[RMDB]
The record gives the reactivity of an RNA of 207 nucleotides to DMS and 2A3.
Reactivities are given for positions 27 through 156.
High DMS reactivity at an A or C suggests that its Watson-Crick edge is free.
The RNA was probed in 150 mM KOAc, 10 mM MgCl2 and 150 mM bicine (pH 8.5) at 24 C.
2A3 adducts were read by reverse transcription with SuperScript II with manganese.
For DMS, 19,279 sequencing reads were counted.

RNA sequence: GGGAACGACUCGAGUAGAGUCGAAAAGAAGCAGUCCUUAUUGUGUGUGAUGUUUAGUCAUCGCACUGUGCCUACGGGCUGCCAACGUAGGCCCAAUGUGCCGAGAGGCACUAGAAGUACGGCUUAUUAUGAUGCAUCGCCGUACCAAAGAUGCUGAAAUAUACGGAUAUUUCGAUAUCCGUAUAUUAAAAGAAACAACAACAACAAC
Reactivity to DMS in 0.01 (KOAc 150mM, MgCl2 10mM, bicine 150mM(pH8.5), 24C), signal-to-noise 6, nucleotides 027 to 156: g010a140a110g030c030a070g010u000c020c020u000u000a070u010u010g020u000g020u000g020u000g020a030u000g020u000u010u010a200g010u000c010a030u010c020g010c010a010c020u010g020u000g010c030c040u000a060c080g010g010g030c030u000g020c080c010a080a060c050g000u010a060g010g010c010c040c050a060a090u000g010u000g030c000c010g000a280g010a300g010g020c010a000c010u010a070g000a210a060g010u000a010c010g020g000c010u000u000a110u010u000a140u000g010a200u000g010c110a140u000c150g000c020c010g020u000a030c020c020a090a110a150g000a110u000g010c010u010g000a130
Reactivity to 2A3 in 0.01 (KOAc 150mM, MgCl2 10mM, bicine 150mM(pH8.5), 24C), signal-to-noise 7, nucleotides 027 to 156: g090a040a010g000c010a000g020u060c010c030u110u110a270u290u240g090u040g000u000g010u010g040a020u010g110u060u200u200a270g100u170c010a010u010c000g000c010a000c010u030g040u090g060c010c020u020a030c020g010g020g020c030u020g000c010c000a050a010c030g060u060a020g030g000c000c030c010a060a080u110g000u000g000c000c000g030a030g020a040g020g000c000a000c010u020a030g050a130a000g000u010a000c000g000g000c000u040u040a060u130u090a120u240g210a060u140g050c040a030u070c010g000c000c000g000u010a010c000c010a010a120a020g050a040u080g040c030u060g030a070